[RMDB]
RNA sequence: GGGAACGACUCGAGUAGAGUCGAAAACGGUAUUGGUCAAGGCUAUACCGACAGCGCACCUUCAACAGGGCGCUUAAUCCCCGGCCAAGCGCCGAAAUAUGAAUAGACACCGCUGGGCUGGUAGGGCAAAACAUGGCGAUCUUCGGAUCGCCAUGAAGGGUAUGCAUAAGUUCGCUUAUGCAUACCCAAAAGAAACAACAACAACAAC
Reactivity to DMS in 0.01 (KOAc 150mM, MgCl2 10mM, bicine 150mM(pH8.5), 24C), signal-to-noise 2, nucleotides 027 to 156: c020g000g020u000a000u010u000g090g020u000c070a200a160g030g000c030u000a140u000a020c040c030g070a130c110a040g000c070g020c020a110c000c000u010u000c080a170a150c210a130g000g020g020c000g010c060u010u020a000a080u000c020c000c000c000g000g000c020c010a130a010g010c040g060c060c000g000a070a050a070u000a240u000g000a100a090u000a150g000a210c030a140c130c020g030c010u000g000g020g000c030u000g070g010u000a070g020g010g020c050a110a080a100a120c000a020u000g020g010c000g000a030u000c010u000u010c300g050g000a000u000c000g000c000c000a000u000g000a000a080
Reactivity to 2A3 in 0.01 (KOAc 150mM, MgCl2 10mM, bicine 150mM(pH8.5), 24C), signal-to-noise 2, nucleotides 027 to 156: c000g000g000u010a010u040u220g050g020u050c060a070a090g080g010c020u010a000u000a030c020c000g050a030c040a060g000c000g010c050a300c100c040u050u090c040a060a040c020a080g000g010g000c000g000c000u000u010a000a020u000c010c010c000c000g010g000c010c010a080a020g010c050g020c070c030g100a060a020a020u290a130u140g080a060a050u060a160g060a000c020a010c090c020g030c010u010g000g060g000c010u000g100g030u070a090g040g050g030c070a010a000a060a090c010a000u000g010g000c000g000a030u000c000u000u060c030g080g010a010u020c020g000c000c000a000u000g000a030a010

An RNA of 207 nucleotides, treated with DMS and 2A3 and read out base by base. Reactivities are given for positions 27 through 156. The reactions ran in a buffer of 150 mM KOAc, 10 mM MgCl2 and 150 mM bicine (pH 8.5), at 24 C. For 2A3, 1,277 sequencing reads were counted. For DMS, 2,237 sequencing reads were counted. 2A3 adducts were read by reverse transcription with SuperScript II with manganese. DMS adducts were read by reverse transcription with MarathonRT.